Structure probing data (2A3 and DMS) for a 207-nucleotide construct. For 2A3, 3,138 sequencing reads were counted. High 2A3 reactivity points to a flexible backbone, as in loops and unpaired stretches. It was measured as part of the RMDB library M2RFPK. For DMS, 2,872 sequencing reads were counted. For 2A3 the reverse transcriptase was SuperScript II with manganese. DMS adducts were read by reverse transcription with MarathonRT.
[RMDB]
RNA sequence: GGGAACGACUCGAGUAGAGUCGAAAAAGACGUGUACGCACGUCACACCGUGGCGGCGGUGUAAAACAAACAUUAAACCGCCAGCGUCCCGGAACAAGGCAUUUUCCGAUUCUCCGGGGGUUGCAAAAAAACUGAACUUGGUUCGCCAAGUUCAGAACUACACUGUAUACUUCGGUAUACAGUGUAGAAAAGAAACAACAACAACAAC
Reactivity to 2A3 in 0.01 (KOAc 150mM, MgCl2 10mM, bicine 150mM(pH8.5), 24C), signal-to-noise 3, nucleotides 027 to 156: a000g010a000c020g000u000g010u070a030c240g010c150a000c000g000u010c000a000c000a010c000c010g010u040g000g000c010g000g000c010g010g010u020g040u090a040a050a000a030c080a030a100a000c020a020u140u220a090a060a040c010c000g010c000c010a000g030c010g050u000c000c000c000g000g010a040a040c070a070a020g070g000c100a100u080u080u140u100c010c020g040a080u150u020c050u030c050c000g000g000g000g000g020u160u110g000c020a030a030a000a000a000a010a100c010u000g000a000a000c000u000u000g000g020u070u040c110g000c080c000a010a000g000u010u010c000a000g000a000a000
Reactivity to DMS in 0.01 (KOAc 150mM, MgCl2 10mM, bicine 150mM(pH8.5), 24C), signal-to-noise 2, nucleotides 027 to 156: a090g010a040c010g020u000g020u000a110c260g070c040a030c000g000u000c000a120c040a040c030c010g040u000g000g010c010g010g140c020g000g000u000g000u000a050a050a080a200c150a140a140a100c090a120u000u000a040a110a080c010c000g050c000c000a090g030c030g000u000c010c010c010g040g020a080a150c100a100a110g020g020c140a140u000u010u000u000c030c000g000a210u000u010c090u010c010c010g020g030g000g020g010u010u000g030c000a010a010a100a070a070a120a160c030u000g000a010a000c000u000u010g030g020u000u010c260g070c010c000a000a010g000u000u000c000a000g010a030a090